RNA sequence: GGGAACGACUCGAGUAGAGUCGAAAACUUCUUCCGCCGCGCGGGCCUCCUGCCCGAGGCGGCCCAGCUGCUCGUACAUCGCCGAGAUGGCCGUGUCGGAUUCGUUAAGCGCGGCCAAGGCUUGCUCAUAUCGGAUCCUAUUCGUAGGAUCCGAUAUAAAAGAAACAACAACAACAAC
Reactivity to DMS in 0.01 (KOAc 150mM, MgCl2 10mM, bicine 150mM(pH8.5), 24C), signal-to-noise 3, nucleotides 027 to 126: c150u000u000c040u000u010c020c050g030c000c010g010c060g000c050g010g020g030c000c170u010c170c050u000g010c010c000c010g020a060g010g040c030g000g020c020c060c020a050g010c030u010g020c010u000c010g000u010a100c080a050u010c130g010c050c000g010a150g010a240u010g010g010c000c020g020u000g010u000c070g020g000a200u010u020c190g000u010u000a160a200g020c040g010c010g020g010c010c020a010a030g010g020c030u000u000g010c090u000c100
Reactivity to 2A3 in 0.01 (KOAc 150mM, MgCl2 10mM, bicine 150mM(pH8.5), 24C), signal-to-noise 1, nucleotides 027 to 126: c010u080u000c010u140u040c020c060g000c000c020g020c000g020c040g030g000g000c000c040u070c010c040u140g050c010c000c000g000a020g010g000c000g000g000c000c000c000a000g030c010u050g000c010u020c020g050u100a060c030a270u120c100g000c020c020g050a100g020a200u110g000g000c000c010g010u040g080u170c040g040g080a170u150u170c100g050u100u120a100a050g020c010g000c000g010g030c000c010a030a010g020g000c000u030u110g010c030u080c080